The record gives the reactivity of an RNA of 177 nucleotides to 2A3 and DMS. The RNA was probed in 150 mM KOAc, 10 mM MgCl2 and 150 mM bicine (pH 8.5) at 24 C. The 2A3 profile rests on 7,389 reads. 2A3 adducts were read by reverse transcription with SuperScript II with manganese. The data come from the RNA Mapping Database (RMDB), library OK2TST. Reactivities are given for positions 27 through 126. High DMS reactivity at an A or C suggests that its Watson-Crick edge is free.

RNA sequence: GGGAACGACUCGAGUAGAGUCGAAAAUCAUUGAUGCCAAUUACGGCCAAGAGGUCAAAGCGGUUUAUCCGGGCACGAUCGUGUUUGCCGAGUAUCUGCGAGGUUAUGGCUUGGUUGUGCUCCUCGAAUACUAGUAGGCAUUCGUGCCUACUAGUAUAAAAGAAACAACAACAACAAC
Reactivity to 2A3 in 0.01 (KOAc 150mM, MgCl2 10mM, bicine 150mM(pH8.5), 24C), signal-to-noise 5, nucleotides 027 to 126: u070c030a020u050u240g070a050u140g040c020c000a050a100u230u110a110c090g010g000c010c010a090a050g050a050g050g010u050c040a070a040a010g030c010g020g030u040u140u130a060u110c020c030g010g000g000c020a000c030g050a050u060c030g000u030g020u060u070u170g020c000c010g020a020g010u050a090u170c110u180g040c010g020a010g040g010u080u090a080u250g030g000c000u040u090g010g010u010u020g020u010g010c010u000c030c010u010c030g020a040
Reactivity to DMS in 0.01 (KOAc 150mM, MgCl2 10mM, bicine 150mM(pH8.5), 24C), signal-to-noise 9, nucleotides 027 to 126: u010c060a140u000u010g010a080u000g010c010c020a080a170u000u010a120c210g010g010c010c180a070a110g000a070g000g000u000c040a030a060a090g010c060g010g010u000u010u010a090u010c020c020g010g000g010c010a020c040g010a030u000c050g020u000g000u000u010u010g010c010c010g000a240g010u000a080u010c170u010g010c040g000a220g010g000u000u000a070u000g000g010c020u000u000g000g010u000u000g020u000g010c020u000c010c010u000c040g000a170